[RMDB]
RNA sequence: GGGAACGACUCGAGUAGAGUCGAAAAAAGAGACCUUCAGUCUACCUCGUAUUUCAAUGCAUUCCGUUGGCGUUCCUGAUCGAGAAUGCGGGAGGAGAGGCGUCAACAGGUGACUCCAGAAUCCUGGUAAAGGCUCAUUUUUCGAAAUGAGCCUUUAAAAAGAAACAACAACAACAAC
Reactivity to DMS in 0.01 (KOAc 150mM, MgCl2 10mM, bicine 150mM(pH8.5), 24C), signal-to-noise 3, nucleotides 027 to 126: a070a070g000a050g000a090c020c040u010u000c120a140g010u010c030u010a080c040c010u010c020g000u020a270u010u000u000c060a050a110u010g020c010a020u000u000c010c020g010u000u010g020g010c120g000u000u000c030c000u000g010a060u010c050g000a120g030a030a020u000g010c030g010g000g010a020g000g010a210g000a030g000g010c300g000u000c050a030a070c100a050g000g000u000g000a070c010u000c010c030a090g000a170a100u010c020c000u000g010g000